Background
Chemical mapping of a 177-nucleotide RNA with DMS and 2A3. Source: RMDB library TTRINS, as collected in RNAgym. The 2A3 profile rests on 4,111 reads. DMS adducts were read by reverse transcription with MarathonRT. High DMS reactivity at an A or C suggests that its Watson-Crick edge is free.
[RMDB]
RNA sequence: GGGAACGACUCGAGUAGAGUCGAAAAGAUAUGGACCAGGUCCCUUCUACAGCCGAAGAACAGAUUGUUGUUUCGGAAACGAAACAACAAUCUGGGAGGCUGGUCAGAAGAAACUGGUCCUAAGUCAUCUUUAUAGAUACUUCGGUAUCUAUAAAGAAAAAGAAACAACAACAACAAC
Reactivity to DMS in 0.01 (KOAc 150mM, MgCl2 10mM, bicine 150mM(pH8.5), 24C), signal-to-noise 3, nucleotides 027 to 126: g010a070u000a300u000g000g000a010c000c000a010g020g000u010c270c210c000u000u010c000u010a110c010a010g020c000c000g030a140a140g000a170a250c010a000g000a020u000u000g020u000u010g010u000u000u010c010g030g020a080a110a230c010g000a020a000a010c000a000a000c010a000a000u000c000u000g000g000g000a070g010g000c000u000g010g010u000c170a020g020a020a040g000a070a110a300c000u000g000g010u000c000c000u000a000a050g000u000c040a120
Reactivity to 2A3 in 0.01 (KOAc 150mM, MgCl2 10mM, bicine 150mM(pH8.5), 24C), signal-to-noise 2, nucleotides 027 to 126: g020a010u090a080u240g010g010a010c000c000a010g040g090u240c110c020c000u000u030c010u010a030c000a000g000c000c000g300a300a090g050a120a020c010a020g020a000u000u020g000u010u000g020u000u000u020c010g000g000a030a070a060c020g010a010a010a000c000a000a000c000a000a000u010c000u000g000g000g010a000g010g020c030u010g010g020u140c120a010g000a040a000g050a040a100a030c000u040g000g020u030c000c000u000a020a000g020u000c010a050